This 177-nucleotide RNA was probed chemically with 2A3 and DMS. Values cover nucleotides 27 to 126. The data come from the RNA Mapping Database (RMDB), library OK1LIB.
[RMDB]
RNA sequence: GGGAACGACUCGAGUAGAGUCGAAAAACUUUACAAUUGCAAGUAUAGUUGGUGUUAUAGUUGUUGUAGGAGUAAUUUUAUUACUUUCUGACCAACUUAGAGCAACUGGUGAUAAUGUACAAUUUGCCAUACGUCGACGUUUCGACGUCGACGUAUGAAAAGAAACAACAACAACAAC
Reactivity to 2A3 in 0.01 (KOAc 150mM, MgCl2 10mM, bicine 150mM(pH8.5), 24C), signal-to-noise 2, nucleotides 027 to 126: a000c050u040u060u260a020c030a090a250u090u010g060c070a190a000g120u030a180u040a110g040u000u000g000g010u140g040u230u160a230u140a090g000u000u030g000u030u020g000u050a000g000g000a000g010u000a000a060u000u030u000u300a040u040u030a010c000u010u080u220c060u060g000a060c010c000a000a090c000u000u050a010g040a000g040c000a000a080c000u060g000g100u180g250a130u280a200a110u190g090u140a090c090a110a040u020u050u210g020c010
Reactivity to DMS in 0.01 (KOAc 150mM, MgCl2 10mM, bicine 150mM(pH8.5), 24C), signal-to-noise 1, nucleotides 027 to 126: a010c110u050u000u000a060c050a090a050u000u000g010c000a080a060g010u040a080u030a020g030u010u000g000g020u000g010u000u010a140u000a050g040u000u020g000u000u010g000u000a040g040g000a000g000u000a000a000u000u060u010u050a010u020u000a000c000u000u000u080c050u020g000a010c040c000a000a000c000u000u000a120g000a200g080c070a000a000c080u000g000g030u000g020a130u040a030a130u050g010u030a090c240a010a050u050u070u070g010c280